[RMDB]
RNA sequence: GGGAACGACUCGAGUAGAGUCGAAAAAUAAAGAUCAUCGCACCUGAGACAGGUAGAACUGCGCUAUAAUAUGGUUUUUAUAACCCAUACCCAAUGGACUAUCAUACUGAUAAGCACCAUACGCACGUACAUAGCUGUACAGUGCAACAAAAGUAAAUAACGACCAUACAUUCGUGUAUGGUCGUUAAAAAGAAACAACAACAACAAC
Reactivity to 2A3 in 0.01 (KOAc 150mM, MgCl2 10mM, bicine 150mM(pH8.5), 24C), signal-to-noise 2, nucleotides 027 to 156: a000u040a000a000a000g030a000u040c030a010u060c020g010c090a040c000c020u060g070a050g070a200c070a060g030g000u080a080g050a180a080c120u100g030c060g040c070u150a070u130a300a120u170a050u040g000g000u100u000u000u000u030a060u000a090a080c000c010c010a010u110a140c000c040c010a030a080u060g000g010a020c010u010a010u050c010a050u090a280c070u210g020a040u020a000a120g020c080a130c140c010a010u120a160c140g010c000a000c000g010u000a000c000a000u160a020g150c090u020g050u000a000c030a060g020u000g010c000a010a000c050a000a040a030a020g130u150a000a070a140
Reactivity to DMS in 0.01 (KOAc 150mM, MgCl2 10mM, bicine 150mM(pH8.5), 24C), signal-to-noise 1, nucleotides 027 to 156: a070u000a010a030a070g020a080u010c040a050u010c150g000c000a090c010c030u000g040a210g040a260c010a100g000g040u020a040g040a170a150c000u000g060c050g000c080u000a050u000a170a070u010a020u000g000g040u000u000u040u000u000a050u000a070a040c120c000c020a100u010a060c000c010c060a110a070u010g000g070a010c020u000a000u000c000a180u000a230c160u000g020a110u000a080a080g030c050a050c020c000a130u000a110c130g030c000a020c030g040u000a040c000a050u000a120g010c250u000g010u010a010c010a110g050u000g010c020a110a150c030a020a150a050a110g010u000a100a100a120

The data come from the RNA Mapping Database (RMDB), library OK3TST.
This 207-nucleotide RNA was probed chemically with 2A3 and DMS.
For 2A3 the reverse transcriptase was SuperScript II with manganese.
DMS adducts were read by reverse transcription with MarathonRT.
Conditions: 150 mM KOAc, 10 mM MgCl2 and 150 mM bicine (pH 8.5), 24 C.